[RMDB]
RNA sequence: GGGAACGACUCGAGUAGAGUCGAAAAUCACACGGCUUAUAUCAUCUUUACCUCUGGCUCCACCGGCAGGCCGAAAGGGGUAAUGGUCGGGCAGACGGCUAUCGUCAACCGCCUGCUUUGGAUGCAACACUAUGGGGUAGUUCGCUACCCCAUAGUGAAAAGAAACAACAACAACAAC
Reactivity to 2A3 in 0.01 (KOAc 150mM, MgCl2 10mM, bicine 150mM(pH8.5), 24C), signal-to-noise 2, nucleotides 027 to 126: u060c000a040c030a030c060g040g050c040u190u100a070u050a020u300c020a010u000c010u000u050u020a040c010c010u000c020u000g010g030c000u000c080c010a120c030c060g070g000c060a030g020g000c010c000g040a110a040a020g050g020g000g020u010a000a030u050g020g020u010c000g010g020g000c000a010g010a010c000g000g060c050u090a070u300c090g180u080c050a000a070c010c010g000c010c000u010g000c000u060u070u050g040g000a040u050g030c010a110a030
Reactivity to DMS in 0.01 (KOAc 150mM, MgCl2 10mM, bicine 150mM(pH8.5), 24C), signal-to-noise 4, nucleotides 027 to 126: u000c070a100c110a070c030g020g000c020u000u000a110u010a150u000c060a030u000c010u000u000u000a060c010c010u000c030u010g020g010c020u000c040c080a130c040c060g010g030c090a150g010g020c030c030g000a040a130a070g000g000g020g010u000a020a020u000g010g010u000c030g010g000g010c020a030g010a030c010g000g010c070u000a080u010c200g030u010c150a090a100c010c010g010c010c000u000g000c000u000u010u000g010g000a040u000g020c250a070a150